[RMDB]
RNA sequence: GGGAACGACUCGAGUAGAGUCGAAAAAAGCAUGUCUCUCUUUUGUCUCUCUAUUCAGAACUUAGUAUGGUGAUGGAUCGAUAGAGAGACAUUCCUGCAUCUGUCAUCCAUCACCAUAAAAACAAAACACUGUUGUCGUAUUCGUACGACAACAGUGAAAAGAAACAACAACAACAAC
Reactivity to DMS in 0.01 (KOAc 150mM, MgCl2 10mM, bicine 150mM(pH8.5), 24C), signal-to-noise 1, nucleotides 027 to 126: a040a020g010c090a060u010g000u000c070u020c110u000c110u000u000u000u010g020u000c000u000c000u000c000u000a010u000u000c180a180g000a050a200c230u000u000a110g010u000a000u000g000g000u000g020a010u010g010g010a010u000c120g010a000u000a000g010a020g000a050g040a030c030a010u000u010c010c020u010g030c140a100u010c220u000g010u020c140a060u000c000c000a000u000c000a000c000c020a000u000a000a030a020a060a060c160a050a100a050a090
Reactivity to 2A3 in 0.01 (KOAc 150mM, MgCl2 10mM, bicine 150mM(pH8.5), 24C), signal-to-noise 2, nucleotides 027 to 126: a010a010g070c140a120u120g110u090c010u040c000u030c030u010u000u000u100g000u010c000u010c000u010c010u000a030u120u130c060a030g100a210a090c060u120u120a110g070u080a140u020g000g000u010g000a000u010g000g030a030u090c030g000a000u030a000g010a010g000a000g010a000c000a000u020u000c000c010u040g000c010a090u030c120u250g200u160c050a020u000c020c000a000u000c000a020c000c000a010u010a000a010a000a000a000c030a010a070a010a000